The record gives the reactivity of an RNA of 177 nucleotides to DMS and 2A3. 2A3 adducts were read by reverse transcription with SuperScript II with manganese. Values cover nucleotides 27 to 126. The 2A3 profile rests on 2,545 reads. The RNA was probed in 150 mM KOAc, 10 mM MgCl2 and 150 mM bicine (pH 8.5) at 24 C.
RNA sequence: GGGAACGACUCGAGUAGAGUCGAAAAGAUAUGGAUCGGCAUGGGAGAAUGUCGGAAACGAUAAUUCGAAGAACAUGUCGAUCCUAAGUCAAAGAGCGAAAUUCUAGUUCGCUAGAAUUUCGCUCAAGUUAUUCUCACACUUCGGUGUGAGAAUAACAAAAGAAACAACAACAACAAC
Reactivity to DMS in 0.01 (KOAc 150mM, MgCl2 10mM, bicine 150mM(pH8.5), 24C), signal-to-noise 2, nucleotides 027 to 126: g010a050u000a300u000g020g000a030u000c000g010g000c000a020u010g000g000g000a110g000a000a000u000g010u000c000g030g000a140a060a230c000g000a010u000a020a030u000u000c000g030a100a160g000a110a160c000a000u000g000u000c000g010a010u000c000c000u000a010a050g000u000c040a080a110a130g010a000g000c000g000a030a000a000u000u010c000u000a000g000u010u030c270g020c000u000a000g000a010a000u000u000u000c000g000c000u000c000a000a040
Reactivity to 2A3 in 0.01 (KOAc 150mM, MgCl2 10mM, bicine 150mM(pH8.5), 24C), signal-to-noise 2, nucleotides 027 to 126: g020a000u100a040u120g000g000a020u000c000g020g020c000a000u000g000g020g010a070g000a030a000u000g010u010c000g060g000a060a010a000c020g010a010u130a160a290u300u020c020g210a300a010g030a060a030c010a000u000g000u000c020g000a000u000c000c000u010a010a000g010u000c030a170a120a080g010a000g000c000g000a000a000a030u000u000c000u010a030g010u040u110c250g000c170u020a000g010a000a030u000u000u000c000g000c000u000c000a000a000

For DMS, 1,446 sequencing reads were counted.